[RMDB]
RNA sequence: GGGAACGACUCGAGUAGAGUCGAAAAGCAAAGGGGUUCGCCCCUUUGCAAAUAAACCGAUCAAAUAUAAGAAUAUAACGCGAAGAUCGGAUAAGAGCAAAAAAAGGUUCUACUUCGGUAGAACCAACCCAUUAUCAAACUUCGGUUUGAUAAUGGGAAAAGAAACAACAACAACAAC
Reactivity to 2A3 in 0.01 (KOAc 150mM, MgCl2 10mM, bicine 150mM(pH8.5), 24C), signal-to-noise 1, nucleotides 027 to 126: g000c000a020a000a000g030g000g010g030u050u060c180g150c000c000c000c010u000u000u000g000c000a000a000a000u000a000a010a000c010c000g010a020u020c000a010a190a050u180a060u080a170a060g060a200a040u220a010u060a300a110c080g010c040g160a120a090g030a040u010c000g040g050a000u080a100a030g020a000g060c020a000a040a040a000a010a040a200g000g020u000u000c000u000a000c000u020u080c270g070g000u020a000g010a000a000c000c000a000a000
Reactivity to DMS in 0.01 (KOAc 150mM, MgCl2 10mM, bicine 150mM(pH8.5), 24C), signal-to-noise 1, nucleotides 027 to 126: g020c010a010a020a010g000g030g000g000u000u040c190g020c050c000c000c000u000u040u000g030c000a010a100a050u000a110a150a110c000c010g010a000u000c000a090a200a130u000a100u010a120a150g010a110a140u000a110u000a120a080c180g000c170g030a100a100g000a010u000c000g010g030a070u000a020a040g000a160g010c190a000a000a020a040a100a060a070g050g040u000u000c000u030a000c000u010u000c090g050g000u010a000g000a000a000c000c010a000a000